[RMDB]
RNA sequence: GGGAACGACUCGAGUAGAGUCGAAAAGGAGCGGAUGGAGCCACGUGUUCGCUGGAACUGACCGACGUGACACCUACGCAGUACGAACUCAAUUUAAUAGACGACAACGGCUUCAAAAAUGCACUGCCCCUCGUGAUAAUUUCGAUUAUCACGAGGGAAAAGAAACAACAACAACAAC
Reactivity to 2A3 in 0.01 (KOAc 150mM, MgCl2 10mM, bicine 150mM(pH8.5), 24C), signal-to-noise 3, nucleotides 027 to 126: g070g000a080g020c040g020g010a090u110g050g010a000g020c010c010a020c020g030u060g040u050u070c020g000c070u040g070g070a080a030c050u060g050a080c060c030g030a040c030g040u050g050a020c020a030c050c030u040a040c030g000c040a020g070u040a030c040g030a060a020c020u020c070a020a000u020u060u090a230a180u140a060g090a070c030g000a020c040a040a030c070g020g010c000u010u000c060a100a120a020a010a020u120g000c040a010c060u040g030c000
Reactivity to DMS in 0.01 (KOAc 150mM, MgCl2 10mM, bicine 150mM(pH8.5), 24C), signal-to-noise 3, nucleotides 027 to 126: g000g000a070g020c030g000g010a120u000g010g000a030g020c010c010a070c100g020u000g000u000u010c050g030c040u010g000g000a070a070c110u030g000a090c090c060g020a120c020g000u010g010a070c060a110c070c050u010a160c100g000c050a070g020u000a090c110g000a050a090c110u000c090a100a050u010u010u010a070a090u000a070g010a120c060g000a050c050a040a090c050g000g010c020u000u020c030a000a070a040a090a090u000g010c030a070c070u000g000c120